[RMDB]
RNA sequence: GGGAACGACUCGAGUAGAGUCGAAAACGCUGGGUGUAGCGCUUCGGGUAUGAACUACCUGGAAGCUCCUGAAGCGCGCACGGGAGCUUCCAGGCAUAUCUCUAGCGUGAGCGUCCUACACCUGUGCUGAAGCGCGCACGGCAACCGAAAGGUGCGAGCAAAACUGAAGGUUCGCCUUCAGUUUUGCAAAAGAAACAACAACAACAAC
Reactivity to 2A3 in 0.01 (KOAc 150mM, MgCl2 10mM, bicine 150mM(pH8.5), 24C), signal-to-noise 1, nucleotides 027 to 156: c060g000c020u060g010g030g010u000g010u000a010g030c000g020c060u080u100c080g000g000g040u030a010u010g050a090a070c090u050a080c300c000u000g010g000a000a000g000c000u000c000c010u040g050a170a060g000c000g000c000g000c040a000c000g000g010g000a000g020c000u000u000c000c000a000g000g000c000a000u000a000u000c060u010c040u130a040g060c010g150u110g050a020g020c010g020u080c060c000u020a000c000a000c010c000u040g100u040g040c090u120g090a080a030g010c010g030c000g000c010a010c000g080g000c020a160a170c060c000g040a050a040a040g010g010u030g020c010g040a050